[RMDB]
RNA sequence: GGGAACGACUCGAGUAGAGUCGAAAAAAGAAAUCAAAAAAGAUUUCUGAGACAAACACGCUUCACAAUGUGCGGCAAAGAAACAAUGUUUAUGCAAAGGCACUUCGCAAUGUGUGCUCAAACAUUGACUACCGUCCACCGUUCGCGGUGGACGGAAUCAAGAGAUAACGUUCGCGUUAUCUCUUGAAAAAGAAACAACAACAACAAC
Reactivity to DMS in 0.01 (KOAc 150mM, MgCl2 10mM, bicine 150mM(pH8.5), 24C), signal-to-noise 2, nucleotides 027 to 156: a160a020g020a020a000a020u040c040a020a070a120a230a150a250g010a020u000u000u010c000u030g000a270g020a180c080a170a130a040c020a080c060g030c100u000u000c130a070c060a140a070u000g010u000g000c090g020g010c050a010a070a040g000a180a060a050c030a040a040u000g010u000u000u010a040u000g020c060a010a160a050g000g040c000a030c010u000u010c120g040c160a120a090u000g010u000g030u000g000c000u000c020a020a120a030c010a050u000u000g000a050c100u000a130c000c000g010u000c010c000a000c020c010g050u000u020c300g020c010g030g070u000g000g000a000c000g000g000a010a020
Reactivity to 2A3 in 0.01 (KOAc 150mM, MgCl2 10mM, bicine 150mM(pH8.5), 24C), signal-to-noise 3, nucleotides 027 to 156: a000a000g030a030a020a000u030c040a120a020a280a290a020a000g010a000u000u000u010c010u000g020a040g000a060c060a020a140a000c040a020c080g010c010u070u120c040a030c020a130a300u200g000u030g030c040g000g030c000a010a080a150g050a030a120a000c020a040a000u000g010u000u080u060a070u110g040c050a120a070a100g070g000c010a010c000u130u110c140g060c170a030a120u130g020u000g000u020g030c000u060c100a030a040a010c000a000u000u010g020a060c040u120a090c020c000g000u000c000c000a000c000c010g040u040u060c230g010c010g080g000u010g000g010a000c000g000g000a000a020
An RNA of 207 nucleotides, treated with DMS and 2A3 and read out base by base. The reactions ran in a buffer of 150 mM KOAc, 10 mM MgCl2 and 150 mM bicine (pH 8.5), at 24 C. The data come from the RNA Mapping Database (RMDB), library M2RFPK.